[RMDB]
Notes: The record gives the reactivity of an RNA of 177 nucleotides to DMS and 2A3.
RNA sequence: GGGAACGACUCGAGUAGAGUCGAAAAACAGAGUGCCUGGGGUACACAAUCCCUCACAGGAGACGCCACGGCCCCAGCACUCUUGCUGCCAUGGGGUGCCAGGGGAGUGGUUCUCACCCAGCCACCAGGAGUGUACUCUUUUCGAAGAGUACACUCCAAAAGAAACAACAACAACAAC
Reactivity to DMS in 0.01 (KOAc 150mM, MgCl2 10mM, bicine 150mM(pH8.5), 24C), signal-to-noise 2, nucleotides 027 to 126: a050c090a040g020a060g010u000g020c290c010u000g010g000g000g010u000a090c140a050c070a110a180u020c010c020c020u000c160a080c170a130g020g000a020g000a070c210g050c040c060a050c070g000g000c000c020c000c000a210g000c000a000c000u000c010u000u000g010c080u000g020c090c040a130u000g020g010g020g010u000g010c020c060a060g060g000g000g000a240g000u000g000g000u000u010c000u000c020a270c020c020c020a070g000c110c000a060c020c080a200
Reactivity to 2A3 in 0.01 (KOAc 150mM, MgCl2 10mM, bicine 150mM(pH8.5), 24C), signal-to-noise 1, nucleotides 027 to 126: a000c050a030g050a020g040u000g010c010c020u010g020g000g000g060u200a060c060a000c020a030a120u020c020c030c010u040c030a090c020a030g030g070a040g000a030c120g050c000c070a030c060g240g070c080c000c010c010a010g000c010a000c000u000c000u000u070g030c040u110g080c030c040a110u070g000g000g000g000u050g000c010c070a170g050g010g030g000a000g000u010g020g070u040u020c000u040c010a000c030c000c000a000g000c030c010a020c020c010a030
For DMS, 953 sequencing reads were counted. The reactions ran in a buffer of 150 mM KOAc, 10 mM MgCl2 and 150 mM bicine (pH 8.5), at 24 C. Values cover nucleotides 27 to 126.